[RMDB]
RNA sequence: GGGAACGACUCGAGUAGAGUCGAAAAUCAACAUCUCUUCGGAGAUGUUGAAAAGAAGGCUGAACUCCGUGCAAAUACACGAUGAAGUGUUGCUCGGAGCAAAUCUUCUCGCCUUCGGGCGAGAAGAACCUUUUUUAUGGUUCGCCAUAAAAAAGGUAAAAGAAACAACAACAACAAC
Reactivity to DMS in 0.01 (KOAc 150mM, MgCl2 10mM, bicine 150mM(pH8.5), 24C), signal-to-noise 3, nucleotides 027 to 126: u010c000a010a010c000a000u000c000u000c000u010u020c170g010g020a020g000a010u000g020u000u000g000a000a050a070a140g010a070a120g020g020c110u010g010a150a190c010u000c010c000g020u000g020c000a030a080a100u000a300c020a020c050g010a090u010g010a090a150g010u000g010u010u000g010c000u000c010g000g010a020g000c080a030a040a090u000c000u000u010c010u000c000g030c010c010u010u010c150g010g020g030c000g000a010g000a000a000g000a030
Reactivity to 2A3 in 0.01 (KOAc 150mM, MgCl2 10mM, bicine 150mM(pH8.5), 24C), signal-to-noise 3, nucleotides 027 to 126: u010c000a000a000c000a000u000c010u000c000u020u090c210g040g000a010g000a000u000g000u000u000g000a010a000a010a020g040a040a040g180g030c130u120g050a060a040c000u000c000c010g000u000g010c000a040a140a070u200a160c010a010c040g140a150u300g200a290a050g010u000g000u030u020g000c000u000c010g000g000a000g000c010a000a020a010u000c000u000u000c000u000c000g000c010c000u030u050c210g080g000g020c020g000a000g000a010a000g010a010